[RMDB]
RNA sequence: GGGAACGACUCGAGUAGAGUCGAAAACACGUGAUCGGAUCCCAUGCUAGCUAGUAGUCAGGAUCGGUACGAUCGAGUAGCAGAGCUAGAUCAGUACUGCGAUCUCACGAGAUACUAGGUACAUGUACGUCGCUCUUCAUUUCGAUGAAGAGCGACGAAAAGAAACAACAACAACAAC
Reactivity to DMS in 0.01 (KOAc 150mM, MgCl2 10mM, bicine 150mM(pH8.5), 24C), signal-to-noise 1, nucleotides 027 to 126: c100a210c050g020u020g000a190u010c020g010g020a120u000c020c030c030a070u000g030c300u000a020g010c010u020a040g010u000a010g010u000c080a140g000g010a000u000c000g010g070u000a020c050g000a030u000c010g000a020g020u000a160g060c100a070g040a140g010c040u000a120g030a020u000c000a090g020u000a020c000u010g020c040g000a010u000c000u000c180a240c160g030a030g000a140u000a020c010u000a040g000g020u000a010c040a040u000g020u000a240
Reactivity to 2A3 in 0.01 (KOAc 150mM, MgCl2 10mM, bicine 150mM(pH8.5), 24C), signal-to-noise 1, nucleotides 027 to 126: c050a000c010g030u060g050a270u050c000g060g000a120u030c000c010c000a000u000g000c000u010a030g020c030u000a000g020u030a020g030u050c030a090g000g060a000u010c010g030g000u000a010c000g000a020u020c010g000a050g080u180a080g060c230a140g040a070g210c000u030a020g000a040u000c030a100g000u000a000c080u070g140c000g030a010u000c020u080c030a100c100g100a070g090a160u010a000c020u000a000g030g020u010a000c010a020u030g090u130a050